This 177-nucleotide RNA was probed chemically with DMS and 2A3.
RNA sequence: GGGAACGACUCGAGUAGAGUCGAAAACAGUAUGCCUUCGGGCAUACUGAAACCAGAGGGUAUCUGGCCCACGCUCCCAUGCGUGCCGGGAAUCCCAUCCGAAAACGGAUGUCUUCGGACAUCCGAACUUUGCGAGAGUGUUCGCACUCUCGCAAAGAAAAGAAACAACAACAACAAC
Reactivity to DMS in 0.01 (KOAc 150mM, MgCl2 10mM, bicine 150mM(pH8.5), 24C), signal-to-noise 1, nucleotides 027 to 126: c000a020g010u000a000u000g000c000c000u000u010c190g020g000g030c000a010u010a000c030u000g000a040a030a120c020c000a110g010a080g020g010g040u000a060u000c000u000g000g000c170c050c090a020c030g020c020u000c230c120c290a050u000g000c010g010u000g000c120c060g000g020g000a130a060u000c000c000c010a140u000c080c040g000a050a050a120a100c010g030g020a000u000g010u000c000u000u000c110g030g010a000c000a000u000c000c000g030a000a070
Reactivity to 2A3 in 0.01 (KOAc 150mM, MgCl2 10mM, bicine 150mM(pH8.5), 24C), signal-to-noise 1, nucleotides 027 to 126: c000a010g020u000a000u010g000c000c020u050u100c290g100g040g050c030a000u000a000c000u010g000a030a000a010c000c000a030g060a070g070g030g000u150a080u090c000u020g040g000c050c080c000a000c010g000c000u190c010c050c070a040u220g010c020g030u010g000c030c030g020g000g040a040a120u050c000c020c000a050u060c040c020g120a070a110a000a040c020g000g000a000u000g000u000c010u000u030c180g120g000a000c010a000u020c000c000g020a020a010
Values cover nucleotides 27 to 126. The DMS profile rests on 691 reads. Source: RMDB library M2PK50, as collected in RNAgym.